[RMDB]
RNA sequence: GGGAACGACUCGAGUAGAGUCGAAAAGCAAAACGGGUAAGUCCUAUACGGCCAGCUCCCUUCGAAUCCUCCAGGGCUUGAUCGCAGCAAAGGUAGUUGGUUGUAGCGGCGCGAUAUAGUAAGCUUACCCACCCAAAGAGACCGUUCGCGGUCUCAACACUGUACCUCCCUUCGGGGAGGUACAGUGAAAAGAAACAACAACAACAAC
Reactivity to 2A3 in 0.01 (KOAc 150mM, MgCl2 10mM, bicine 150mM(pH8.5), 24C), signal-to-noise 2, nucleotides 027 to 156: g090c020a040a080a000a030c100g000g020g000u000a000a000g020u040c000c010u010a020u000a000c000g000g000c010c000a030g000c020u000c000c010c000u000u010c010g050a060a060u140c000c010u000c000c000a000g010g010g020c010u060u080g080a080u200c110g000c000a010g010c020a040a000a000g030g020u020a010g010u020u000g100g090u070u200g040u160a000g000c010g010g000c130g010c010g080a040u010a000u010a010g030u040a080a010g000c000u000u010a000c010c020c000a000c000c000c000a030a120a000g010a000g000a000c010c010g010u040u090c300g010c010g100g000u000c000u000c000a000a000